[RMDB]
RNA sequence: GGGAACGACUCGAGUAGAGUCGAAAAGACGCCUGUGUGGCGAAGCGAGCAUGAGAUGGAGCCGCAAGAGAAGAUGAGAUAGAAGCGGCAGGAUAGAUUGCUCGCUAAAAGAUCCAUCUCACAGAGACAUCCGUGAUCCAUUCGUGGAUCACGGAUGAAAAGAAACAACAACAACAAC
Reactivity to DMS in 0.01 (KOAc 150mM, MgCl2 10mM, bicine 150mM(pH8.5), 24C), signal-to-noise 2, nucleotides 027 to 126: g000a060c080g020c020c000u020g000u000g050u000g020g000c000g010a240a000g000c000g000a020g000c000a020u040g000a300g000a020u010g010g030a180g000c000c000g070c020a190a040g010a200g000a220a210g020a140u000g000a220g020a030u000a120g030a110a210g040c000g010g010c000a000g060g030a020u000a000g070a070u020u010g000c000u000c000g020c020u000a040a000a070a130g000a070u020c050c020a110u000c010u020c010a110c100a070g060a070g000a220
Reactivity to 2A3 in 0.01 (KOAc 150mM, MgCl2 10mM, bicine 150mM(pH8.5), 24C), signal-to-noise 2, nucleotides 027 to 126: g070a000c040g030c060c020u170g020u010g030u190g140g000c010g020a010a010g010c010g000a000g000c000a030u010g010a000g030a040u080g030g060a010g030c000c000g000c030a080a040g090a000g020a160a050g150a120u300g030a000g030a070u180a030g150a160a000g020c000g000g030c000a040g060g150a030u080a000g040a020u030u040g000c000u000c000g000c000u000a000a000a040a000g090a050u060c020c000a020u000c040u010c100a110c050a060g140a000g000a070

This 177-nucleotide RNA was probed chemically with DMS and 2A3.
It was measured as part of the RMDB library OK1LIB.
Values are in units of 0.01, from 0 to 300, in steps of 10.
For 2A3 the reverse transcriptase was SuperScript II with manganese.
The DMS profile rests on 1,304 reads.
As a SHAPE reagent, 2A3 marks flexible, mostly unpaired nucleotides at the ribose 2'-OH.
Reactivities are given for positions 27 through 126.